The data come from the RNA Mapping Database (RMDB), library OK1LIB. Structure probing data (DMS and 2A3) for a 177-nucleotide construct. 2A3 adducts were read by reverse transcription with SuperScript II with manganese. The 2A3 profile rests on 1,725 reads.

RNA sequence: GGGAACGACUCGAGUAGAGUCGAAAAUGCUGGCGGGCUUCUCUUAGGGAUUGUAGAGAUGCAGUCCCCAGUGUCGCAAAUUAGAUUGUAUAUGGUUACGUGCGACAGAUACUGGUGAGGCGCUCAAGGGUUAAUUAUACUUCGGUAUAAUUAACCCAAAAGAAACAACAACAACAAC
Reactivity to DMS in 0.01 (KOAc 150mM, MgCl2 10mM, bicine 150mM(pH8.5), 24C), signal-to-noise 3, nucleotides 027 to 126: u020g000c030u000g010g010c130g010g010g010c040u000u000c010u020c010u000u040a110g000g020g010a030u000u010g000u000a050g000a130g000a130u000g000c020a020g030u000c000c010c000c050a000g010u000g000u000c010g010c030a080a050a090u020u030a080g010a100u010u010g040u010a090u050a100u040g010g000u010u010a060c220g020u000g030c060g010a010c000a100g000a170u020a130c030u000g010g030u010g000a070g010g010c140g020c030u000c040a070a230
Reactivity to 2A3 in 0.01 (KOAc 150mM, MgCl2 10mM, bicine 150mM(pH8.5), 24C), signal-to-noise 2, nucleotides 027 to 126: u150g000c010u010g050g050c020g050g000g000c000u020u000c000u000c000u010u080a040g000g010g020a010u050u000g000u020a010g000a000g000a040u080g020c000a000g000u000c010c010c000c000a030g020u000g010u010c000g000c000a000a000a050u230u100a110g110a130u180u230g060u100a070u050a040u180g210g040u090u040a020c030g000u030g020c040g000a000c000a000g070a020u300a070c050u030g000g060u090g010a030g030g020c020g000c000u050c090a110a240